The record gives the reactivity of an RNA of 177 nucleotides to 2A3 and DMS. For 2A3 the reverse transcriptase was SuperScript II with manganese. Source: RMDB library OK1LIB, as collected in RNAgym.

RNA sequence: GGGAACGACUCGAGUAGAGUCGAAAACUGAUAAGGAAACACAGUAUGCACAAAUGGCAGAUUACGACCAGACAAUCAGCGAGUACUAUGAUCAACGUACAAACGGGAAUCGCAAAGAAACAUGGUCCCCCAAAAACAUCUUCGGAUGUUUUUGGGGAAAAGAAACAACAACAACAAC
Reactivity to 2A3 in 0.01 (KOAc 150mM, MgCl2 10mM, bicine 150mM(pH8.5), 24C), signal-to-noise 3, nucleotides 027 to 126: c060u030g060a110u210a190a050g240g010a090a080a000c050a000c000a080g130u100a090u090g060c090a070c020a070a090a150u120g030g000c020a010g040a070u080u210a060c060g030a010c000c000a020g020a060c050a020a090u060c050a020g010c000g010a000g040u000a040c050u010a040u180g060a140u140c100a070a140c090g030u080a050c050a070a090a020c020g030g000g030a020a020u010c010g000c050a050a150a030g080a040a070a000c010a020u000g000g000u060c000
Reactivity to DMS in 0.01 (KOAc 150mM, MgCl2 10mM, bicine 150mM(pH8.5), 24C), signal-to-noise 2, nucleotides 027 to 126: c010u000g000a010u060a050a150g000g000a300a000a290c080a120c060a070g000u000a140u000g000c220a050c290a020a140a000u070g000g070c040a100g000a150u000u060a020c000g000a050c080c030a000g090a010c210a070a030u020c040a100g000c080g000a110g000u000a050c000u000a090u020g000a110u020c210a050a120c150g000u000a060c190a000a040a120c100g000g010g000a050a060u000c020g010c050a000a160a070g000a030a090a040c070a020u150g000g030u000c000